RNA sequence: GGGAACGACUCGAGUAGAGUCGAAAACUCAUUCACGGUUAUGUCUGUCUCUGGCAGAGCAGACCGUCAGGAGGAAGAGGUCACCAUCUUCACGAAGCCAAAGCCAAAUUCCGCCUUGUCCUGUAAAAUUUAAUUAGCCAUUCGUGGCUAAUUAAAUAAAAGAAACAACAACAACAAC
Reactivity to DMS in 0.01 (KOAc 150mM, MgCl2 10mM, bicine 150mM(pH8.5), 24C), signal-to-noise 7, nucleotides 027 to 126: c020u000c030a120u030u030c160a080c030g000g000u000u000a050u020g030u000c010u000g000u000c010u030c140u040g010g010c060a030g010a030g010c020a040g000a030c010c020g030u010c140a060g000g000a070g000g010a070a050g010a110g000g000u010c030a110c070c040a090u020c030u000u010c040a110c080g000a110a100g010c030c030a050a120a140g000c020c050a030a100a120u010u020c020c040g000c010c020u000u000g020u000c020c010u000g000u020a040a030a050
Reactivity to 2A3 in 0.01 (KOAc 150mM, MgCl2 10mM, bicine 150mM(pH8.5), 24C), signal-to-noise 9, nucleotides 027 to 126: c010u010c010a090u170u130c060a020c030g010g030u070u080a290u300g020u000c010u000g030u020c010u020c080u290g030g000c020a010g020a050g040c010a010g010a020c000c000g020u010c020a070g010g040a020g030g030a050a030g030a020g020g030u050c010a020c060c010a070u030c020u080u060c040a030c090g040a030a010g020c010c030a080a030a000g020c000c010a030a140a080u080u010c010c010g020c010c020u030u040g030u010c010c010u040g040u070a010a080a030

This 177-nucleotide RNA was probed chemically with DMS and 2A3. 2A3 adducts were read by reverse transcription with SuperScript II with manganese. The RNA was probed in 150 mM KOAc, 10 mM MgCl2 and 150 mM bicine (pH 8.5) at 24 C. DMS adducts were read by reverse transcription with MarathonRT.